An RNA of 177 nucleotides, treated with 2A3 and read out base by base. Conditions: 150 mM KOAc, 10 mM MgCl2 and 150 mM bicine (pH 8.5), 24 C. Values cover nucleotides 27 to 126.

[RMDB]
RNA sequence: GGGAACGACUCGAGUAGAGUCGAAAAUCAAAAUUUCGAUUUUCACCAAUCCGAUUCACUCUGUAAUAAAGAAUAAACAACAUACAGCCAUUGACACACCCAAAUUUAGGCACGUCAAAUCGGCUAUUCAUUUUAAAACGUUCGCGUUUUAAAAUGAAAAAGAAACAACAACAACAAC
Reactivity to 2A3 in 0.01 (KOAc 150mM, MgCl2 10mM, bicine 150mM(pH8.5), 24C), signal-to-noise 1, nucleotides 027 to 126: u000c020a050a120a170a220u130u150u190c090g020a000u000u000u000u030c060a050c000c050a000a050u050c050c000g050a000u020u070c080a030c050u100c050u140g020u090a000a080u050a300a300a050g120a000a140u130a160a060a060c020a020a000c000a050u200a110c080a060g030c020c000a000u020u000g000a000c000a000c000a000c020c040c010a080a110a100u180u270u090a020g000g010c000a020c090g000u000c020a000a000a120u120c020g000g000c020u000a000u020
Record summary:
2A3 adducts were read by reverse transcription with SuperScript II with manganese. The data come from the RNA Mapping Database (RMDB), library RFMREP.